Chemical mapping of a 177-nucleotide RNA with 2A3 and DMS.
For 2A3, 4,408 sequencing reads were counted.
High DMS reactivity at an A or C suggests that its Watson-Crick edge is free.
For DMS the reverse transcriptase was MarathonRT.
2A3 adducts were read by reverse transcription with SuperScript II with manganese.

[RMDB]
RNA sequence: GGGAACGACUCGAGUAGAGUCGAAAACGACGACACAAACGGAGAACACUGCAAAUCACAAAUUAAAGCAAACCUUUUUCUUUAUAGAACUUUUCCGUCUGUAAAGGCCAAGAUGUAAUCGCACUGGCGAUAGGCUACGGUUCGCCGUAGCCUAUCGAAAAGAAACAACAACAACAAC
Reactivity to 2A3 in 0.01 (KOAc 150mM, MgCl2 10mM, bicine 150mM(pH8.5), 24C), signal-to-noise 6, nucleotides 027 to 126: c030g090a000c040g040a000c010a010c010a110a140a010c050g030g030a040g020a090a000c060a010c050u070g010c040a050a090a090u080c030a030c070a090a150a060u120u180a170a080a010g030c040a030a050a120c000c000u040u030u000u060u050c020u020u030u010a030u020a030g070a030a070c000u100u070u080u050c030c030g020u000c000u010g010u040a070a000a000g030g010c010c020a050a020g070a080u050g010u080a140a090u050c050g010c020a010c020u020g040g000
Reactivity to DMS in 0.01 (KOAc 150mM, MgCl2 10mM, bicine 150mM(pH8.5), 24C), signal-to-noise 2, nucleotides 027 to 126: c030g010a050c040g010a120c170a050c050a030a090a170c090g000g000a050g010a080a150c050a020c080u000g000c050a020a060a100u000c060a110c080a030a170a070u050u030a050a030a070g000c160a020a020a070c080c000u000u000u000u010u040c000u040u000u000a010u000a030g000a080a050c080u000u010u000u020c020c050g010u000c020u000g010u030a030a030a050g010g000c040c030a050a010g000a120u010g030u020a060a070u010c120g010c050a040c050u000g020g000